Structure probing data (DMS and 2A3) for a 207-nucleotide construct. For 2A3 the reverse transcriptase was SuperScript II with manganese. For 2A3, 2,055 sequencing reads were counted. The reactions ran in a buffer of 150 mM KOAc, 10 mM MgCl2 and 150 mM bicine (pH 8.5), at 24 C. Source: RMDB library M2RFPK, as collected in RNAgym.

[RMDB]
RNA sequence: GGGAACGACUCGAGUAGAGUCGAAAAGGGCCAUGUACCUUUCCAAAAUGAGAUCCCAUCUUGCACACUGUGCUAAUUUGAGAUUCUCAUGCCUCCUACUUGGAGAGAUCUGGACUAGAAGUCAGGGAAUAGGUCGUUUCUUUCGAGAAACGACCAAUCCUAAAAAUACCUUCGGGUAUUUUUAGGAAAAAGAAACAACAACAACAAC
Reactivity to DMS in 0.01 (KOAc 150mM, MgCl2 10mM, bicine 150mM(pH8.5), 24C), signal-to-noise 2, nucleotides 027 to 156: g000g030g020c010c070a070u010g020u000a000c000c000u000u000u000c010c010a080a080a090a040u000g000a030g010a040u000c000c010c000a060u000c110u000u000g010c010a050c020a200c180u010g010u000g000c020u000a010a050u000u000u020g010a060g000a040u000u010c020u000c010a020u000g010c080c030u020c090c050u000a180c140u000u010g020g000a040g010a070g020a040u000c020u000g030g010a090c030u000a100g010a070a130g020u000c050a070g020g010g000a060a150u010a110g020g000u000c000g010u000u000u010c000u000u020u000c270g010a040g000a010a030a010c000g010a010c010c000a000a020
Reactivity to 2A3 in 0.01 (KOAc 150mM, MgCl2 10mM, bicine 150mM(pH8.5), 24C), signal-to-noise 4, nucleotides 027 to 156: g030g020g000c050c030a130u210g050u130a080c040c010u040u010u080c010c020a040a110a020a070u010g000a010g000a000u000c000c010c000a000u000c020u000u020g000c010a020c030a070c170u300g010u000g020c010u180a030a030u040u010u040g010a030g000a030u290u050c000u000c010a010u040g030c000c010u030c010c000u110a230c080u120u170g010g010a020g000a020g020a040u040c040u090g020g030a020c010u040a100g050a200a020g110u040c050a040g020g010g050a070a100u110a220g010g000u000c000g000u000u000u000c000u020u040u020c050g070a000g000a010a000a000c000g000a000c000c000a010a000